[RMDB]
RNA sequence: GGGAACGACUCGAGUAGAGUCGAAAAGAUAUGGACACCAAGGACAUGAAGUUAUUCGGAAACGAAUGUCAGCUUCAACAGCCUUGAGUGUCCUAAGUCAAAAGGUGGCACGUUCGCGUGCCACCAAGCUCAUAUUGAUCUUCGGAUCAAUAUGAGCAAAAGAAACAACAACAACAAC
Reactivity to 2A3 in 0.01 (KOAc 150mM, MgCl2 10mM, bicine 150mM(pH8.5), 24C), signal-to-noise 3, nucleotides 027 to 126: g010a010u020a000u050g010g000a000c000a000c000c000a010a020g020g000a040c200a300u300g020a010a000g010u080u050a020u020u010c000g010g010a020a000a000c010g010a010a010u060g100u250c190a020g040c000u000u040c030a300a280c110a200g000c000c000u000u000g050a040g000u010g000u000c000c000u000a000a000g000u000c000a090a000a010a240g000g000u000g000g020c000a020c020g010u080u120c300g020c010g190u000g000c020c000a000c000c000a000a000
Reactivity to DMS in 0.01 (KOAc 150mM, MgCl2 10mM, bicine 150mM(pH8.5), 24C), signal-to-noise 3, nucleotides 027 to 126: g000a020u000a100u020g000g000a020c000a000c000c010a020a020g040g020a020c140a240u010g000a010a030g010u000u050a050u000u000c000g010g000a030a020a060c010g020a040a000u000g000u010c300a150g000c000u010u000c000a180a140c230a230g000c010c000u010u020g010a050g010u000g000u000c000c000u000a000a070g020u000c020a090a060a150a130g050g040u010g000g010c020a000c030g020u010u010c250g010c020g030u010g000c000c000a000c000c000a000a030
Overview:
Chemical mapping of a 177-nucleotide RNA with 2A3 and DMS. The reactions ran in a buffer of 150 mM KOAc, 10 mM MgCl2 and 150 mM bicine (pH 8.5), at 24 C. For DMS the reverse transcriptase was MarathonRT. The DMS profile rests on 2,345 reads. For 2A3, 5,033 sequencing reads were counted. Values are in units of 0.01, from 0 to 300, in steps of 10.